[RMDB]
RNA sequence: GGGAACGACUCGAGUAGAGUCGAAAAAGAACUCGUUGAAGAACUCCACGUCGUGCUUGACGCAGUUCUGGUAGAGCGUCUGCAGGAUCAUGUGGCCGGUGCGGUCGGCCGCGUAGCAGGCCCUGCGUAUCAGUACUCCGUUCGCGGAGUACUGAUAAAAAGAAACAACAACAACAAC
Reactivity to DMS in 0.01 (KOAc 150mM, MgCl2 10mM, bicine 150mM(pH8.5), 24C), signal-to-noise 5, nucleotides 027 to 126: a030g020a150a070c030u000c010g000u000u000g000a090a020g000a030a040c030u020c090c130a130c080g000u010c050g010u020g020c170u030u010g010a000c020g030c190a020g010u000u000c000u000g010g030u010a050g000a060g020c110g010u010c010u000g010c020a090g000g020a090u020c150a030u020g020u000g000g010c000c000g010g000u020g000c110g010g020u010c010g000g000c000c000g010c020g020u010a070g020c050a090g010g000c030c010c010u000g010c040g010
Reactivity to 2A3 in 0.01 (KOAc 150mM, MgCl2 10mM, bicine 150mM(pH8.5), 24C), signal-to-noise 7, nucleotides 027 to 126: a000g050a020a020c030u030c050g040u080u150g100a060a030g020a050a060c020u050c070c080a120c110g100u140c050g030u100g170c060u070u140g010a000c000g010c090a010g000u020u000c010u020g030g010u070a030g000a010g040c130g030u010c020u030g000c010a030g060g110a130u160c040a060u160g010u030g010g000c010c000g020g040u150g130c130g080g100u130c010g000g000c000c020g000c000g000u010a020g020c030a020g000g000c000c020c000u010g000c010g020

Notes: The record gives the reactivity of an RNA of 177 nucleotides to DMS and 2A3. It was measured as part of the RMDB library OK1LIB. The reactions ran in a buffer of 150 mM KOAc, 10 mM MgCl2 and 150 mM bicine (pH 8.5), at 24 C.